An RNA of 177 nucleotides, treated with DMS and 2A3 and read out base by base. Values are in units of 0.01, from 0 to 300, in steps of 10. Reactivities are given for positions 27 through 126. For DMS, 1,074 sequencing reads were counted. For 2A3 the reverse transcriptase was SuperScript II with manganese.
RNA sequence: GGGAACGACUCGAGUAGAGUCGAAAAAUUAACAAAGGUGCUUUAAGUCAAGUGACAACGGCGUCAUUAGCGGGUAUUUCCGGUAAAAAAAUUAGAAAAUUAGCAAUUCAAAUGAUUGAAAACAAUCGAUUAGUAGAUGCUUCGGCAUCUACUAAUCAAAAGAAACAACAACAACAAC
Reactivity to DMS in 0.01 (KOAc 150mM, MgCl2 10mM, bicine 150mM(pH8.5), 24C), signal-to-noise 1, nucleotides 027 to 126: a040u010u080a050a090c150a000a130a050g000g090u000g000c010u010u040u000a200a150g000u000c000a220a110g030u010g010a000c000a020a040c220g000g000c050g000u010c000a050u040u120a100g010c050g000g030g020u000a020u040u040u010c000c000g000g010u000a000a000a020a170a000a000a150u020u000a070g000a200a040a050a140u090u100a020g000c040a170a040u000u000c040a050a060a110u020g060a060u000u000g000a160a060a070a060c090a000a010u010c090
Reactivity to 2A3 in 0.01 (KOAc 150mM, MgCl2 10mM, bicine 150mM(pH8.5), 24C), signal-to-noise 2, nucleotides 027 to 126: a000u060u040a050a030c120a130a180a000g000g000u050g040c010u170u030u100a110a020g010u070c070a060a300g010u050g280a080c010a060a060c000g060g000c000g050u000c000a000u020u040a040g030c010g010g070g040u060a090u020u090u160c030c040g030g020u070a010a100a020a000a000a100a100u150u090a010g060a000a020a030a030u140u190a050g130c020a000a010u150u040c000a130a110a210u150g010a100u030u110g040a060a030a030a050c040a020a000u020c020